Conditions: 150 mM KOAc, 10 mM MgCl2 and 150 mM bicine (pH 8.5), 24 C. Chemical mapping of a 177-nucleotide RNA with DMS and 2A3. For 2A3, 3,257 sequencing reads were counted. Reactivities are given for positions 27 through 126. Source: RMDB library M2PK50, as collected in RNAgym. For 2A3 the reverse transcriptase was SuperScript II with manganese.
RNA sequence: GGGAACGACUCGAGUAGAGUCGAAAAAGUUUAGAUUUCGAUCUAAACUAGACCACUAAGAGGAUGACGAGUGACUACGUCGCAUCUAGUAGAAUGCGCCCAGCUGUGAGCAGUUCGCUGCUCACAAAAGAGCAGUGUAUUUCGAUACACUGCUCUUAAAAGAAACAACAACAACAAC
Reactivity to DMS in 0.01 (KOAc 150mM, MgCl2 10mM, bicine 150mM(pH8.5), 24C), signal-to-noise 4, nucleotides 027 to 126: a020g010u000u010u010a010g010a020u000u000u010c170g010a020u000c000u000a000a010a000c010u010a050g010a190c040c030a070c060u000a060a080g000a030g000g010a080u010g010a030c020g000a110g000u000g020a120c210u010a040c040g010u000c020g010c110a050u000c010u000a050g010u010a060g000a090a100u000g010c080g010c020c020c000a150g020c160u000g020u000g000a020g010c010a010g010u000u020c240g030c000u000g000c000u000c000a010c010a000a010
Reactivity to 2A3 in 0.01 (KOAc 150mM, MgCl2 10mM, bicine 150mM(pH8.5), 24C), signal-to-noise 3, nucleotides 027 to 126: a000g010u000u000u000a010g000a020u090u040u080c220g040a010u000c000u010a000a000a010c010u000a010g030a040c010c030a010c060u060a150a050g030a020g150g040a170u080g020a060c020g020a010g070u070g050a080c060u080a030c140g070u020c020g000c010a030u000c010u020a010g020u020a030g060a240a070u090g020c020g030c020c000c000a040g050c100u110g010u010g010a000g000c010a000g010u020u100c160g040c080u010g010c000u010c000a000c000a000a050